[RMDB]
RNA sequence: GGGAACGACUCGAGUAGAGUCGAAAAAAGGAACUAAAAAAUUGGAUCUGUAAGGUUAUUUCAAAUUGACAUUUUAAGUGGCUCUUAACAGUCUUUUGCCAUAAGAUAAUCUGGGUACUCUAAUUGCAAUAACACUGCAGAUGCUAGGGUGGUGGCACACCAUCUAGGCGUUCGCGCCUAGAUGGUGAAAAGAAACAACAACAACAAC
Reactivity to 2A3 in 0.01 (KOAc 150mM, MgCl2 10mM, bicine 150mM(pH8.5), 24C), signal-to-noise 1, nucleotides 027 to 156: a000a000g040g010a040a050c090u200a030a020a000a000a160a300u180u140g020g020a000u030c020u030g040u030a000a020g040g020u020u000a000u010u040u070c010a020a100a060u020u170g020a030c020a040u090u060u090u210a100a030g010u020g000g000c000u010c010u260u010a150a060c030a110g140u160c000u050u080u040u150g040c000c000a030u030a120a000g030a070u080a060a060u120c040u040g050g000g000u080a180c040u000c010u070a090a090u050u010g030c000a000a030u000a030a020c080a000c050u020g000c000a000g020a020u030g060c000u000a010g010g010g010u020g010g020u040g000g010c040a010